[RMDB]
RNA sequence: GGGAACGACUCGAGUAGAGUCGAAAAGAUAUGGAACGGUACGCAGCAACAGCUACUGAAUACGGCAUAAUUCGGAAACGAAUUAUGCCGUAUUCAGUAGACAUGCUGAGUACCCGUUCCUAAGUCAGUUCACCUAGUAGUUCGCUACUAGGUGAACAAAAGAAACAACAACAACAAC
Reactivity to DMS in 0.01 (KOAc 150mM, MgCl2 10mM, bicine 150mM(pH8.5), 24C), signal-to-noise 1, nucleotides 027 to 126: g000a030u020a300u000g010g030a020a000c000g010g000u000a010c000g010c000a000g020c000a030a100c300a220g000c000u000a030c000u000g000a010a000u000a000c000g000g000c000a000u000a000a000u000u000c010g000g000a150a120a290c030g000a000a020u010u000a000u000g000c030c010g000u000a000u000u000c000a030g000u010a010g010a020c110a110u000g030c010u000g000a070g000u020a000c100c050c060g010u000u000c000c000u000a030a060g000u000c060a110
This 177-nucleotide RNA was probed chemically with DMS. Reactivities are rounded to 0.1 and cut off at 0 and 3. Conditions: 150 mM KOAc, 10 mM MgCl2 and 150 mM bicine (pH 8.5), 24 C.